[RMDB]
RNA sequence: GGGAACGACUCGAGUAGAGUCGAAAAUCCCCAUUCGUGGGGAAAAAAACCGUAGGAUCUCUUGGACCAGGAGUUAUUAUAGUAGUGCGUUCGAAAGAGCGCCUACUUGUACUCCUGCUAGAGAUCCUAAACGGAAAAAAUCCGAUUCGUCGGAUAAAGGAUUAUCUAAUUUCGAUUAGAUAAUCCUAAAAGAAACAACAACAACAAC
Reactivity to DMS in 0.01 (KOAc 150mM, MgCl2 10mM, bicine 150mM(pH8.5), 24C), signal-to-noise 1, nucleotides 027 to 156: u000c010c010c000c030a120u010u000c190g030u000g000g010g030g000a000a000a050a070a060a040a060c000c010g020u010a080g000g010a030u010c000u000c000u000u010g020g000a170c250c020a030g000g000a030g000u000u000a090u000u000a070u000a010g000u000a000g010u030g070c000g030u000u000c010g000a150a060a300g000a010g020c010g050c030c000u010a000c020u000u020g020u000a050c020u000c000c000u000g020c030u000a010g000a030g010a000u010c010c000u000a000a020a050c040g000g010a010a020a110a120a130a050u000c000c000g000a090u000u020c250g010u000c010g030g000a020u000a040a170
Reactivity to 2A3 in 0.01 (KOAc 150mM, MgCl2 10mM, bicine 150mM(pH8.5), 24C), signal-to-noise 1, nucleotides 027 to 156: u010c020c020c010c020a020u060u140c210g090u050g000g000g050g000a000a110a070a050a070a000a000c020c000g020u030a010g000g000a050u000c010u010c020u090u210g030g100a100c110c050a010g020g000a000g100u120u110a080u200u150a200u080a020g000u000a000g010u020g170c010g000u010u000c010g050a110a100a060g010a030g010c010g010c010c000u000a010c000u020u010g000u000a000c000u010c000c010u000g000c010u000a000g000a000g000a010u000c000c000u010a000a000a050c000g000g000a070a120a000a060a000a000u020c020c000g010a020u060u090c150g030u020c020g150g000a010u180a090a100